[RMDB]
An RNA of 207 nucleotides, treated with 2A3 and DMS and read out base by base. In probing experiments dimethyl sulfate is read out at A N1 and C N3, which are open when not base-paired. The reactions ran in a buffer of 150 mM KOAc, 10 mM MgCl2 and 150 mM bicine (pH 8.5), at 24 C. For DMS the reverse transcriptase was MarathonRT. The 2A3 profile rests on 2,601 reads.

RNA sequence: GGGAACGACUCGAGUAGAGUCGAAAAUCCGCUAUGAAUCUAGUCACUAAAUAAACACAAUUAGCUACUGUGUGUAAUAGUGAGUGUUGAUAACACAAAAUAAUAGUAUAGUUUUGGAAGAUUAUACGCGCCCUUGCUCCGUUCGCGGAGCAAGGAACGAUAUGAACUUCUUCGGAAGUUCAUAUCGAAAAGAAACAACAACAACAAC
Reactivity to 2A3 in 0.01 (KOAc 150mM, MgCl2 10mM, bicine 150mM(pH8.5), 24C), signal-to-noise 4, nucleotides 027 to 156: u000c020c010g000c070u120a150u230g160a170a080u080c110u120a070g130u050c010a000c010u010a000a030a040u030a020a060a000c010a010c020a030a110u110u100a090g070c070u140a080c060u020g000u000g000u000g000u010a010a040u010a030g000u000g030a040g010u020g040u020u070g110a190u210a270a010c020a000c030a020a160a050a060u230a080a090u100a110g010u010a020u000a030g020u020u030u080u170g100g040a070a060g000a080u040u030a030u030a040c070g060c020g070c040c000c000u000u000g010c000u000c010c010g030u060u030c090g000c010g100g000a000g000c000a000a000g000g000a000a010
Reactivity to DMS in 0.01 (KOAc 150mM, MgCl2 10mM, bicine 150mM(pH8.5), 24C), signal-to-noise 2, nucleotides 027 to 156: u010c000c000g030c140u000a120u000g000a140a090u010c080u000a210g020u000c000a020c010u010a050a030a070u000a150a200a020c020a030c010a020a050u000u010a200g030c180u020a070c050u010g020u010g000u000g020u000a110a300u000a040g000u000g020a070g050u000g010u000u000g000a120u000a070a100c040a100c020a060a090a060a110u000a050a300u000a070g000u000a020u000a020g010u000u000u000u010g020g010a230a200g000a060u000u000a020u000a020c020g010c080g000c120c000c040u000u020g000c000u000c000c010g020u000u000c300g020c060g030g030a020g000c000a000a000g000g010a000a020